[RMDB]
RNA sequence: GGGAACGACUCGAGUAGAGUCGAAAACUGCAGCAUUUGGAGGAUGGCUCCAAGCGUCAGCGCAUCAGCGUUCAGGACGAAUUCGUGUCCCAGGCACCUGUCUUCACCAUGCCGGUAAGGGAUGUGCAUGUCAUCUCGUGUUCGCACGAGAUGACAUAAAAGAAACAACAACAACAAC
Reactivity to 2A3 in 0.01 (KOAc 150mM, MgCl2 10mM, bicine 150mM(pH8.5), 24C), signal-to-noise 1, nucleotides 027 to 126: c050u080g060c050a000g000c000a070u000u090u140g060g000a030g080g030a290u130g080g050c000u000c000c000a030a010g000c020g040u060c050a030g100c020g000c000a160u110c020a080g050c000g030u080u070c040a060g070g080a030c040g050a050a050u090u090c070g040u050g110u080c010c020c000a020g060g000c000a020c020c000u110g140u170c010u010u030c010a000c000c020a030u110g160c080c020g000g030u040a020a020g010g000g030a020u000g000u030g050c050
Reactivity to DMS in 0.01 (KOAc 150mM, MgCl2 10mM, bicine 150mM(pH8.5), 24C), signal-to-noise 2, nucleotides 027 to 126: c050u000g020c090a060g010c050a060u010u000u010g020g010a030g030g010a140u010g000g010c010u000c020c000a020a050g020c060g000u010c070a080g000c000g010c020a150u010c120a090g000c020g030u000u000c160a060g000g020a080c070g000a090a120u000u000c050g020u010g010u000c010c010c010a140g020g010c050a030c050c030u000g010u000c040u000u000c180a110c020c010a100u030g020c180c110g000g040u020a030a100g020g020g020a060u000g000u000g000c130
The data come from the RNA Mapping Database (RMDB), library OK2TST. Structure probing data (2A3 and DMS) for a 177-nucleotide construct. The RNA was probed in 150 mM KOAc, 10 mM MgCl2 and 150 mM bicine (pH 8.5) at 24 C. The 2A3 profile rests on 1,230 reads. Reactivities are rounded to 0.1 and cut off at 0 and 3.